Chemical mapping of a 177-nucleotide RNA with DMS and 2A3. 2A3 adducts were read by reverse transcription with SuperScript II with manganese.
RNA sequence: GGGAACGACUCGAGUAGAGUCGAAAAUGAAAAUGUGCGUCCCUCCCGAAGCUGCGCGGUCGGUCGAAGAGGACGACCACAGCCGAUAGAGGACUGCCGGUCUUCGGUCAAGGGAAAAAGAAAAAAACAGGAAGGUAAGAUUCGUCUUACCUUCCUGAAAAGAAACAACAACAACAAC
Reactivity to DMS in 0.01 (KOAc 150mM, MgCl2 10mM, bicine 150mM(pH8.5), 24C), signal-to-noise 4, nucleotides 027 to 126: u010g000a110a050a090a090u010g030u020g020c140g010u000c010c010c000u000c120c000c000g000a040a040g000c000u000g010c160g020c050g010g010u000c010g010g010u010c020g010a110a110g010a180g000g000a070c030g000a030c050c040a130c120a080g010c020c050g000a110u010a090g000a060g000g000a020c020u000g010c050c040g020g000u000c030u010u000c010g000g010u020c210a110a050g010g000g010a010a020a030a090a100g020a010a000a060a050a040a060a130
Reactivity to 2A3 in 0.01 (KOAc 150mM, MgCl2 10mM, bicine 150mM(pH8.5), 24C), signal-to-noise 3, nucleotides 027 to 126: u130g050a040a060a020a080u220g040u100g100c040g050u020c020c000c000u020c010c000c000g010a000a000g000c010u010g040c060g010c020g150g000u020c020g030g080u030c030g010a130a070g090a110g190g070a070c040g000a020c020c000a050c040a050g040c020c010g030a030u100a090g120a050g060g000a010c020u050g010c000c010g010g000u020c030u000u020c010g010g000u040c060a040a040g000g020g060a010a010a040a040a020g130a030a060a010a020a000a000a000
The data come from the RNA Mapping Database (RMDB), library M2PK90. For DMS, 3,523 sequencing reads were counted. The reactions ran in a buffer of 150 mM KOAc, 10 mM MgCl2 and 150 mM bicine (pH 8.5), at 24 C.